[RMDB]
RNA sequence: GGGAACGACUCGAGUAGAGUCGAAAAGAUAUGGAUCCGUGAACUACGAAUCCAUUUCGGAAACGAAAUUAAUUCGCACGGAGUCCUAAGUCAAAUCCCUGUGGCCUGUUCGCAGGCCACAGGGAAACUAUUCAUUGUUCUUCGGAACAAUGAAUAGAAAAGAAACAACAACAACAAC
Reactivity to 2A3 in 0.01 (KOAc 150mM, MgCl2 10mM, bicine 150mM(pH8.5), 24C), signal-to-noise 1, nucleotides 027 to 126: g020a010u070a030u200g020g000a000u000c010c000g030u040g040a070a090c110u160a070c300g050a000a000u010c060c030a020u010u010u000c010g050g000a050a010a070c020g000a020a000a000u020u040a020a040u070u000c010g030c010a010c040g030g080a000g250u100c020c010u030a150a010g000u020c060a070a030a130u040c000c020c000u020g050u010g000g160c040c040u070g130u200u220c300g020c130a020g050g100c040c010a000c000a000g000g000g000a010a010a000
Reactivity to DMS in 0.01 (KOAc 150mM, MgCl2 10mM, bicine 150mM(pH8.5), 24C), signal-to-noise 1, nucleotides 027 to 126: g000a020u010a300u000g020g000a210u000c010c000g030u000g020a050a080c160u000a300c010g020a010a010u000c050c120a060u000u000u000c000g010g010a080a080a220c020g000a000a010a050u000u010a090a030u000u000c020g000c000a020c010g000g000a030g000u040c000c000u000a050a080g000u000c030a060a100a100u010c010c010c000u000g010u020g020g000c000c000u000g020u010u000c270g030c000a030g000g020c000c010a000c000a050g010g000g000a000a000a110